The data come from the RNA Mapping Database (RMDB), library OK1LIB. Structure probing data (DMS and 2A3) for a 177-nucleotide construct. For DMS the reverse transcriptase was MarathonRT. For 2A3 the reverse transcriptase was SuperScript II with manganese. Reactivities are given for positions 27 through 126. The reactions ran in a buffer of 150 mM KOAc, 10 mM MgCl2 and 150 mM bicine (pH 8.5), at 24 C. The 2A3 profile rests on 1,118 reads.
[RMDB]
RNA sequence: GGGAACGACUCGAGUAGAGUCGAAAAAUGAUGUAGUCGCGGGCGAAUCCGGUGGACGUCAGGUUCUCGCUGCGGUCCUCCAUCCAUUUGACCGGCUUGUCCAGCAGCAGCGACGCGACAAUGGCACCUAUGCCCACACGUUCGCGUGUGGGCAUAGAAAAGAAACAACAACAACAAC
Reactivity to DMS in 0.01 (KOAc 150mM, MgCl2 10mM, bicine 150mM(pH8.5), 24C), signal-to-noise 1, nucleotides 027 to 126: a130u000g000a060u010g030u010a100g010u000c010g000c010g000g020g000c020g000a090a150u000c000c030g060g110u040g000g000a010c040g000u070c150a010g020g020u000u020c000u010c000g000c020u000g040c020g000g000u000c050c000u000c100c020a090u000c010c020a180u000u000u000g000a160c080c070g000g000c160u030u020g010u000c080c070a120g050c020a140g000c040a090g000c000g000a050c000g020c000g000a000c070a120a040u040g000g010c140a100c180
Reactivity to 2A3 in 0.01 (KOAc 150mM, MgCl2 10mM, bicine 150mM(pH8.5), 24C), signal-to-noise 2, nucleotides 027 to 126: a010u210g030a080u130g030u190a030g030u060c000g000c010g010g010g000c060g020a070a050u000c030c050g010g000u050g000g050a020c010g050u130c000a000g000g000u070u000c040u030c050g020c030u030g020c010g010g010u010c020c000u010c000c000a070u050c010c040a140u060u070u180g090a030c020c000g000g000c000u080u210g040u090c110c040a020g050c070a000g010c000a000g000c050g020a010c000g000c030g000a010c010a040a110u070g020g050c010a010c000